[RMDB]
An RNA of 177 nucleotides, treated with 2A3 and DMS and read out base by base. It was measured as part of the RMDB library OK2TST.
RNA sequence: GGGAACGACUCGAGUAGAGUCGAAAAUUAACUCGUAGCUAUGCAGAGUUAACAGUGAGUUCAAACCACAUAAGGCUAGAGUAGACUUUCAGGAACGUGGCUUAAAUAACUAAAAAUUUCUCGCCUAAUACAAAUCCAAUUUCGAUUGGAUUUGUAUAAAAGAAACAACAACAACAAC
Reactivity to 2A3 in 0.01 (KOAc 150mM, MgCl2 10mM, bicine 150mM(pH8.5), 24C), signal-to-noise 2, nucleotides 027 to 126: u020u010a010a000c000u000c040g070u110a030g080c100u100a050u300g010c020a030g010a000g040u000u000a000a010c020a030g070u050g160a070g000u080u080c090a120a080a010c020c010a040c010a010u080a020a050g020g000c030u000a030g020a030g200u040a020g050a070c010u100u100u080c110a030g070g020a100a070c050g000u020g030g000c000u030u070a070a100a120u050a000a130c050u100a050a040a040a080a220u010u060u020c030u020c040g050c010c010u020a040
Reactivity to DMS in 0.01 (KOAc 150mM, MgCl2 10mM, bicine 150mM(pH8.5), 24C), signal-to-noise 3, nucleotides 027 to 126: u000u010a020a040c000u000c010g020u020a140g030c070u000a080u020g020c050a160g000a030g000u010u010a010a040c240a090g030u000g000a110g000u000u000c080a050a100a100c060c030a040c060a130u010a100a040g000g000c030u010a100g000a180g010u000a040g010a060c050u000u000u000c110a110g000g000a070a080c160g000u000g020g000c030u000u000a030a050a060u010a060a060c040u010a020a050a090a090a110u000u000u000c010u000c030g010c140c070u020a080